[RMDB]
RNA sequence: GGGAACGACUCGAGUAGAGUCGAAAAACGCGGUCGGAUCGAUCCUCGAUACGCUCGCGGAGACGGGCCUCGACGAAGAGACACUGGUCGUGUUCACGACCGAACACGGGAUCGCGUUCCCGCGAGCAAUUAGGACGGAUUUCGAUCCGUCCUAAUUAAAAGAAACAACAACAACAAC
Reactivity to DMS in 0.01 (KOAc 150mM, MgCl2 10mM, bicine 150mM(pH8.5), 24C), signal-to-noise 7, nucleotides 027 to 126: a090c070g020c110g000g010u000c020g020g000a030u000c010g010a120u000c040c030u010c100g010a080u010a100c270g000c000u000c000g020c000g000g000a060g010a020c020g020g000g010c060c010u000c020g010a170c150g010a110a100g010a120g010a080c120a110c130u010g010g010u010c010g010u000g010u010u010c120a080c060g000a030c060c030g000a050a050c100a110c040g010g000g010a030u000c030g010c010g010u000u000c020c000c000g010c040g000a030g010c020
Reactivity to 2A3 in 0.01 (KOAc 150mM, MgCl2 10mM, bicine 150mM(pH8.5), 24C), signal-to-noise 4, nucleotides 027 to 126: a010c050g010c050g030g020u010c000g010g030a070u030c020g020a060u040c030c020u040c020g030a050u040a130c090g000c010u000c000g000c000g010g000a040g010a010c010g000g010g020c010c010u040c030g100a120c090g070a110a080g090a020g050a070c040a030c180u180g040g000u030c010g000u020g070u120u170c120a020c020g030a030c000c050g000a050a010c040a020c030g020g000g030a080u130c060g020c000g300u020u020c000c000c000g000c010g010a020g010c030